[RMDB]
RNA sequence: GGGAACGACUCGAGUAGAGUCGAAAAGUUGACUUGUUCGCAAGUCAACAAAGAAAGUGGAAGGCGCGGCGAGCUGCAGCCGCAGUGAAUCAAAUGCAGCAAAAACCCGACGGUUCGCCGUCGGGAACAACAGUAUAACGUUCGCGUUAUACUGUUGAAAAGAAACAACAACAACAAC
Reactivity to 2A3 in 0.01 (KOAc 150mM, MgCl2 10mM, bicine 150mM(pH8.5), 24C), signal-to-noise 5, nucleotides 027 to 126: g000u000u000g000a000c000u020u010g010u060u090c110g010c100a000a000g000u000c010a000a000c000a000a010a000g060a030a080a000g080u100g040g100a140a040g070g020c040g000c010g030g000c010g020a050g010c000u000g000c000a000g000c000c010g010c020a010g090u100g110a030a040u090c030a030a010a050u070g000c000a000g000c000a030a000a000a030a050c000c000c000g000a000c000g000g050u020u060c210g030c060c000g000u000c000g000g000g000a000a000
Reactivity to DMS in 0.01 (KOAc 150mM, MgCl2 10mM, bicine 150mM(pH8.5), 24C), signal-to-noise 5, nucleotides 027 to 126: g010u000u000g000a000c010u000u010g010u000u010c180g030c000a010a010g000u000c000a000a000c000a060a080a090g010a060a060a060g010u010g010g000a070a060g010g020c110g010c010g000g000c000g000a120g010c010u000g010c000a200g000c010c000g000c010a070g020u010g000a070a090u010c180a010a010a040u000g000c000a010g020c000a050a040a050a090a060c010c000c010g010a010c000g000g000u000u010c210g020c000c000g010u000c000g000g000g000a000a020